[RMDB]
RNA sequence: GGGAACGACUCGAGUAGAGUCGAAAACUCUGCUGGGUUUUCGCCCAGUUGAACAGUCGAAGACCGUGGAAGCCGUAAUGGCACGAAGCGAUCGAAUGGCUGGAUAACGUAAGAGAGGUCAACCCAGUCCUGUACUAUUGUUCGCAAUAGUACAGGAAAAAGAAACAACAACAACAAC
Reactivity to DMS in 0.01 (KOAc 150mM, MgCl2 10mM, bicine 150mM(pH8.5), 24C), signal-to-noise 9, nucleotides 027 to 126: c010u000c010u000g000c010u000g000g000g010u020u000u030u030c230g010c010c000c000a040g010u000u010g010a150a210c030a000g020u000c000g010a150a230g010a000c020c000g010u000g010g000a290a070g010c000c000g000u020a120a060u060g020g020c000a040c160g020a300a230g010c010g000a040u000c000g000a070a200u030g000g000c010u000g000g010a050u030a240a040c020g000u010a030a030g000a030g000a040g010g000u010c160a090a100c000c000c000a160g010
Reactivity to 2A3 in 0.01 (KOAc 150mM, MgCl2 10mM, bicine 150mM(pH8.5), 24C), signal-to-noise 9, nucleotides 027 to 126: c000u000c010u010g000c000u000g000g020g050u060u070u130u160c060g010c000c000c000a000g000u000u010g000a020a000c000a000g000u010c020g030a070a010g000a010c010c000g000u010g010g030a060a000g010c000c000g040u270a160a260u300g010g000c040a030c120g010a010a000g000c000g020a020u020c010g030a100a080u120g000g000c000u010g000g000a080u120a100a010c030g030u060a110a000g030a000g000a020g060g030u070c040a030a090c000c000c010a010g070
Structure probing data (DMS and 2A3) for a 177-nucleotide construct. Reactivities are rounded to 0.1 and cut off at 0 and 3.